[RMDB]
RNA sequence: GGGAACGACUCGAGUAGAGUCGAAAAGUUUUGAAGGGACAUAGACAUUUAGUCCAGAUAAAAAAGGCUUGGGAUUUGAUGCUGCUGCAUUACCACAUGGAGUACCACAUUACCACAUGGCCUUAGAACACCAUUGUACGUUCGCGUACAAUGGUGUAAAAGAAACAACAACAACAAC
Reactivity to 2A3 in 0.01 (KOAc 150mM, MgCl2 10mM, bicine 150mM(pH8.5), 24C), signal-to-noise 2, nucleotides 027 to 126: g020u050u040u050u180g080a090a050g030g010g000a010c020a040u170a060g210a100c090a140u150u200u180a020g000u010c010c000a000g030a120u170a050a130a050a030a000a010g010g000c010u040u030g080g060g060a120u080u020u110g090a150u020g030c020u000g000c000u050g020c040a000u000u050a220c040c020a050c000a010u030g000g060a010g010u000a000c020c000a020c000a030u060u070a110c000c000a070c030a190u110g050g040c030c000u000u000a020g050a040
Reactivity to DMS in 0.01 (KOAc 150mM, MgCl2 10mM, bicine 150mM(pH8.5), 24C), signal-to-noise 3, nucleotides 027 to 126: g030u010u010u000u000g040a240a180g010g000g010a040c030a100u000a080g010a120c190a080u030u000u030a090g020u000c010c010a080g000a110u040a000a070a060a080a040a050g000g010c010u020u000g010g000g000a300u020u000u000g010a040u010g020c140u000g010c060u000g000c010a000u010u000a070c220c180a070c230a030u000g000g000a030g020u000a050c150c060a030c020a020u010u010a110c010c030a060c300a030u000g000g020c010c020u000u000a050g000a200
An RNA of 177 nucleotides, treated with 2A3 and DMS and read out base by base. As a SHAPE reagent, 2A3 marks flexible, mostly unpaired nucleotides at the ribose 2'-OH. Source: RMDB library OK2TST, as collected in RNAgym.